[RMDB]
RNA sequence: GGGAACGACUCGAGUAGAGUCGAAAAAGAACAAUUUGCUGAGGGCUAUUGAGGCGCAACAGCAUCUGUUGCAACUCACAGUCUGGGGCAUCAAGCAGCUCCAGGCAAGAGUCCUGGCUGUGGAAAGCGAUGGUCAAUAGUUCGCUAUUGACCAUCGAAAAGAAACAACAACAACAAC
Reactivity to 2A3 in 0.01 (KOAc 150mM, MgCl2 10mM, bicine 150mM(pH8.5), 24C), signal-to-noise 1, nucleotides 027 to 126: a000g060a050a010c020a070a160u150u110u250g010c020u170g160a000g000g000g030c000u030a100u090u150g030a000g000g020c030g060c010a000a050c000a000g030c070a120u100c050u060g000u020u000g000c030a040a060c000u000c000a010c000a040g000u010c010u020g020g000g000g010c000a030u030c050a040a040g130c070a000g000c000u000c000c000a000g000g020c010a040a020g080a010g090u000c010c010u000g000g000c020u010g030u120g040g070a080a030a000g070
Reactivity to DMS in 0.01 (KOAc 150mM, MgCl2 10mM, bicine 150mM(pH8.5), 24C), signal-to-noise 1, nucleotides 027 to 126: a170g010a160a220c030a060a150u000u000u000g020c030u040g030a060g100g030g000c000u000a100u000u000g000a020g050g070c300g020c000a000a010c000a040g010c160a150u000c040u000g010u000u000g000c070a070a170c020u000c000a040c260a080g000u010c020u000g000g000g020g040c000a040u000c110a080a110g020c100a040g000c000u000c000c010a000g000g000c060a160a060g000a030g010u000c000c000u030g010g000c020u000g000u000g000g010a200a130a040g020
About this RNA: Chemical mapping of a 177-nucleotide RNA with 2A3 and DMS. The RNA was probed in 150 mM KOAc, 10 mM MgCl2 and 150 mM bicine (pH 8.5) at 24 C. Source: RMDB library RFMREP, as collected in RNAgym. For DMS, 605 sequencing reads were counted. For 2A3, 1,069 sequencing reads were counted.